[RMDB]
An RNA of 177 nucleotides, treated with DMS and 2A3 and read out base by base. Reactivities are given for positions 27 through 126.
RNA sequence: GGGAACGACUCGAGUAGAGUCGAAAAGAUAUGGAGCACAGGGAGCUGGUAUCGGAAACGAUACGUCAGCGACGAUCUGUGUCUCCUAAGUCAAACAUGUUUGGCCUGUUCGCAGGCCAAACAUGAACAUCCUCAGAAUGUUCGCAUUCUGAGGAUGAAAAGAAACAACAACAACAAC
Reactivity to DMS in 0.01 (KOAc 150mM, MgCl2 10mM, bicine 150mM(pH8.5), 24C), signal-to-noise 4, nucleotides 027 to 126: g000a020u000a010u020g010g000a020g020c010a000c000a010g000g000g010a010g020c000u000g010g010u000a000u000c000g010g000a000a010a010c000g000a000u000a000c020g010u080c020a010g010c010g020a090c250g000a080u000c000u000g000u000g000u010c000u000c000c000u010a000a080g000u000c010a160a120a280c010a000u000g010u000u000u000g000g010c000c000u000g010u000u010c200g020c010a010g010g010c000c000a000a000a000c000a000u000g000a120a220
Reactivity to 2A3 in 0.01 (KOAc 150mM, MgCl2 10mM, bicine 150mM(pH8.5), 24C), signal-to-noise 2, nucleotides 027 to 126: g010a000u000a010u050g000g000a000g000c000a000c010a010g000g030g010a010g000c000u020g040g000u010a020u000c010g000g000a020a000a000c010g000a010u030a020c030g290u300c050a000g000c010g300a180c000g000a010u010c010u000g000u010g110u090c020u010c000c000u000a010a000g000u000c000a000a090a000c010a010u010g000u000u000u000g000g010c040c000u050g050u080u070c300g020c110a000g000g000c000c000a010a000a000c000a010u000g000a000a020
The reactions ran in a buffer of 150 mM KOAc, 10 mM MgCl2 and 150 mM bicine (pH 8.5), at 24 C. For DMS, 8,063 sequencing reads were counted. For 2A3 the reverse transcriptase was SuperScript II with manganese.